Structure probing data (2A3) for a 207-nucleotide construct.
2A3 adducts were read by reverse transcription with SuperScript II with manganese.
For 2A3, 550 sequencing reads were counted.
Values are in units of 0.01, from 0 to 300, in steps of 10.
[RMDB]
RNA sequence: GGGAACGACUCGAGUAGAGUCGAAAAACACCGGAUUAGGCGUACGCGCCUAGUCCGGUGAGGGUCAGACGAGCAGACACCCAUUGAAGUUCUGCUCUACCGUUAAAAGGAAGUAAACCAUCAUGAAAGAAGUGCGCUUGGUUCGCCAAGCGCACAACUAACAGCAUGGCUUCGGCCAUGCUGUUAGAAAAGAAACAACAACAACAAC
Reactivity to 2A3 in 0.01 (KOAc 150mM, MgCl2 10mM, bicine 150mM(pH8.5), 24C), signal-to-noise 1, nucleotides 027 to 156: a010c000a000c000c000g010g000a010u010u010a000g000g000c000g010u050a010c210g000c010g050c040c000u000a000g000u000c000c000g000g000u010g000a010g000g010g000u010c040a040g000a150c000g000a030g070c000a000g000a000c000a010c010c000c060a060u090u300g010a010a000g040u050u020c000u000g050c000u000c000u010a010c010c010g050u040u040a120a120a000a030g090g100a140a050g100u210a030a200a100c110c060a040u170c070a050u210g240a110a040a110g080a160a000g010u020g010c000g000c000u010u000g110g020u080u080c200g040c040c000a000a010g000c000g000c000a000c000a010a000